Chemical mapping of a 177-nucleotide RNA with 2A3 and DMS.
Source: RMDB library RFM100, as collected in RNAgym.

RNA sequence: GGGAACGACUCGAGUAGAGUCGAAAAAGAAAAAAAGUAGUUUGAAUUCCUGAAUGAUUUUUCCUGUAGAAAGGGGCUUAGGAUAAUGAUUUCAGCUUUAUUGAGGGCAGAUUAGUAGCAGUCUCGAUCAACCAUCCACUUUCGAGUGGAUGGUUGAAAAAGAAACAACAACAACAAC
Reactivity to 2A3 in 0.01 (KOAc 150mM, MgCl2 10mM, bicine 150mM(pH8.5), 24C), signal-to-noise 1, nucleotides 027 to 126: a000g030a000a000a000a000a000a000a020g160u300a090g000u080u070u170g020a000a110u110u000c040c000u000g090a000a000u060g000a060u000u000u000u050u000c000c000u000g010u060a000g040a040a190a000g000g000g030g000c000u030u140a000g040g050a000u000a120a000u040g020a000u020u020u030c000a000g050c010u260u270u020a150u050u240g020a050g000g000g000c030a000g110a220u020u020a000g030u000a000g000c020a000g050u030c000u000c000g050a050
Reactivity to DMS in 0.01 (KOAc 150mM, MgCl2 10mM, bicine 150mM(pH8.5), 24C), signal-to-noise 1, nucleotides 027 to 126: a110g000a000a000a060a000a160a170a080g000u040a040g000u000u000u000g010a140a170u020u010c050c050u020g000a020a030u030g000a100u000u000u000u000u000c030c000u000g000u000a040g030a050a090a100g000g000g000g020c020u000u020a020g000g000a020u000a050a000u020g020a180u000u010u000c050a080g010c100u000u010u000a130u060u020g020a050g000g000g000c080a010g000a010u080u000a080g000u050a150g000c050a140g000u030c020u000c000g010a170
About this RNA:
The RNA was probed in 150 mM KOAc, 10 mM MgCl2 and 150 mM bicine (pH 8.5) at 24 C. As a SHAPE reagent, 2A3 marks flexible, mostly unpaired nucleotides at the ribose 2'-OH. Reactivities are given for positions 27 through 126.